[RMDB]
RNA sequence: GGGAACGACUCGAGUAGAGUCGAAAAGAUAUGGAUGUACUUCUGCGAUAAGAUACUCCGAUAAGCAUAACAUCGGAAACGAUGUAUGCUUUUGACGGAGUCUUAUCGCAGAAGUACAUCCUAAGUCGCAUUGAAAACAGUUCGCUGUUUUCAAUGCAAAAGAAACAACAACAACAAC
Reactivity to DMS in 0.01 (KOAc 150mM, MgCl2 10mM, bicine 150mM(pH8.5), 24C), signal-to-noise 1, nucleotides 027 to 126: g010a140u020a300u000g000g020a000u010g000u000a010c020u000u000c000u000g030c000g000a030u000a010a030g010a110u000a040c010u000c000c000g010a280u000a020a020g020c000a020u000a060a090c000a000u000c000g000g010a200a090a190c000g020a000u000g010u000a010u000g000c010u000u010u000u010g000a150c180g030g000a020g020u000c010u010u000a020u000c010g010c010a000g000a000a000g010u000a000c000a000u000c000c000u020a000a070g000u000c130

Chemical mapping of a 177-nucleotide RNA with DMS. For DMS, 1,481 sequencing reads were counted. The reactions ran in a buffer of 150 mM KOAc, 10 mM MgCl2 and 150 mM bicine (pH 8.5), at 24 C.